[RMDB]
RNA sequence: GGGAACGACUCGAGUAGAGUCGAAAAUUCAGGGAAAGCACAAAAGACCUAGCAUCUUACACAAUCACCUUGAGUUGUGGCCGGCUAGCAAAUGGACCAGACGAAAUUUAACUUCUCUAAAACGUAUUGUAGCAAAACUAACCCAUCCUAUUUGUGAAAUCAUCAGCUCAUUCGUGAGCUGAUGAUUAAAAGAAACAACAACAACAAC
Reactivity to 2A3 in 0.01 (KOAc 150mM, MgCl2 10mM, bicine 150mM(pH8.5), 24C), signal-to-noise 1, nucleotides 027 to 156: u020u020c020a000g050g000g010a000a100a060g010c060a070c020a090a070a010a010g000a030c000c010u020a000g020c000a070u040c060u020u150a070c120a020c050a010a030u030c020a080c110c040u070u140g040a050g050u050u020g070u080g000g000c060c070g010g000c000u000a020g010c050a000a000a200u070g000g020a020c000c060a020g090a030c050g020a060a060a060u060u030u010a110a080c020u050u050c030u000c050u140a100a100a030a030c000g070u030a030u020u230g030u010a040g040c030a100a130a050a000c020u060a000a070c020c000c040a040u090c030c090u020a090u100u020u000g040u060g010a000
An RNA of 207 nucleotides, treated with 2A3 and read out base by base.
The RNA was probed in 150 mM KOAc, 10 mM MgCl2 and 150 mM bicine (pH 8.5) at 24 C.